[RMDB]
RNA sequence: GGGAACGACUCGAGUAGAGUCGAAAAAGGGAAGACAGUAGUCGGGUCGUAAUAAGCAAGACUUAGCCCGAGCCUCCGUUGCCAACGCAGGCUGCCUUGCUUGGCGUGUGGGCAUCGGCCUGCCCCCUCUCUGUCACUUAUUCGUAAGUGACAGAGAAAAAGAAACAACAACAACAAC
Reactivity to DMS in 0.01 (KOAc 150mM, MgCl2 10mM, bicine 150mM(pH8.5), 24C), signal-to-noise 7, nucleotides 027 to 126: a090g000g000g020a140a140g000a040c060a040g010u010a120g010u000c010g010g010g010u000c060g010u010a080a100u010a040a060g010c040a090a050g020a240c040u000u010a110g010c090c000c020g010a060g000c020c010u000c140c020g020u000u000g010c050c080a030a040c130g010c070a020g000g000c110u000g010c180c070u000u010g010c010u000u000g010g000c060g010u010g010u000g010g010g000c010a050u000c050g010g010c080c040u000g000c010c010c000c030c060
Reactivity to 2A3 in 0.01 (KOAc 150mM, MgCl2 10mM, bicine 150mM(pH8.5), 24C), signal-to-noise 5, nucleotides 027 to 126: a010g160g020g030a090a070g040a020c040a040g150u140a010g080u040c030g030g000g000u030c030g040u030a050a100u110a100a000g030c080a080a050g030a160c040u090u150a020g020c010c000c000g010a000g020c010c000u050c020c010g040u050u260g090c020c030a030a010c100g000c010a000g000g040c060u100g050c020c040u030u080g000c010u020u000g050g030c050g020u190g050u050g090g030g000c010a090u050c000g030g000c000c000u050g000c010c000c000c020c000